The record gives the reactivity of an RNA of 207 nucleotides to 2A3. Reactivities are rounded to 0.1 and cut off at 0 and 3. For 2A3, 3,279 sequencing reads were counted. For 2A3 the reverse transcriptase was SuperScript II with manganese. The reactions ran in a buffer of 150 mM KOAc, 10 mM MgCl2 and 150 mM bicine (pH 8.5), at 24 C. Source: RMDB library ARCHII, as collected in RNAgym.
RNA sequence: GGGAACGACUCGAGUAGAGUCGAAAAUGGCCUCGUUUAGAAGGCUUGCCGUACAGCUGUGGUCACGGGGGCUGUACGGGACGUUUACGUGACUGGGCUUGUCUGCACCAUGUCGGUGUGAGUGCAGGAGCCGAGCAAUAACGACAGCAUCGACUGCCUUCCAUUACGUGUUCGCACGUAAUGGAAGAAAAGAAACAACAACAACAAC
Reactivity to 2A3 in 0.01 (KOAc 150mM, MgCl2 10mM, bicine 150mM(pH8.5), 24C), signal-to-noise 4, nucleotides 027 to 156: u130g060g000c030c010u040c050g050u130u200u260a220g030a300a020g020g000c000u020u270g000c020c000g000u000a000c000a000g000c000u050g000u070g290g000u010c000a000c020g060g000g060g010g000c000u000g000u000a010c000g000g010g000a020c130g020u070u150u230a060c010g000u010g000a000c000u000g010g000g010c010u000u000g010u060c000u000g000c020a000c010c000a000u020g000u000c000g040g000u000g000u010g010a040g020u000g000c000a000g000g000a000g000c000c000g010a040g010c070a020a160u130a110a010c010g110a040c070a080g050c000a040u000c000g000a000c010u000g030c000